[RMDB]
Chemical mapping of a 170-nucleotide RNA with DMS and 2A3. Conditions: 150 mM KOAc, 10 mM MgCl2 and 150 mM bicine (pH 8.5), 24 C. For DMS the reverse transcriptase was MarathonRT. For DMS, 9,233 sequencing reads were counted.

RNA sequence: GGGAACGACUCGAGUAGAGUCGAAAACUAUGGAGAAUUAUGAACUAGAGAAGCACUGUUACGACUUGUUACGUGACUGUGAUGCUGUAGCUCCCCAUGAUUUCUUCAUCUUUGAUGUAGACAAAGUUAACCGUAGGCUUCGGCCUACGGAAAAGAAACAACAACAACAAC
Reactivity to DMS in 0.01 (KOAc 150mM, MgCl2 10mM, bicine 150mM(pH8.5), 24C), signal-to-noise 2, nucleotides 027 to 129: c040u020a030u050g030g000a000g010a020a010u000u060a010u000g030a090a110c020u030a010g000a040g010a030a020g000c010a010c010u010g020u040u020a010c000g030a220c020u000u000g040u080u020a050c030g050u000g020a000c010u010g010u000g020a060u020g000c000u000g000u030a030g030c050u060c120c210c080c000a000u020g000a040u000u000u000c000u000u020c010a020u040c110u000u030u030g030a170u000g000u070a050g020a100c050a040a040a060g030u090u060a040a260
Reactivity to 2A3 in 0.01 (KOAc 150mM, MgCl2 10mM, bicine 150mM(pH8.5), 24C), signal-to-noise 5, nucleotides 027 to 129: c030u010a030u020g000g000a000g000a000a010u020u010a040u030g040a060a020c020u040a010g030a010g000a130a000g010c020a010c000u050g000u000u000a000c030g050a040c090u130u270g160u300u220a050c000g000u000g000a010c010u030g020u120g020a040u080g000c000u020g000u020a000g030c000u070c050c030c000c000a000u010g000a000u060u210u020c000u000u000c000a010u000c030u020u050u070g110a190u160g110u180a000g030a040c030a000a060a000g060u060u070a090a050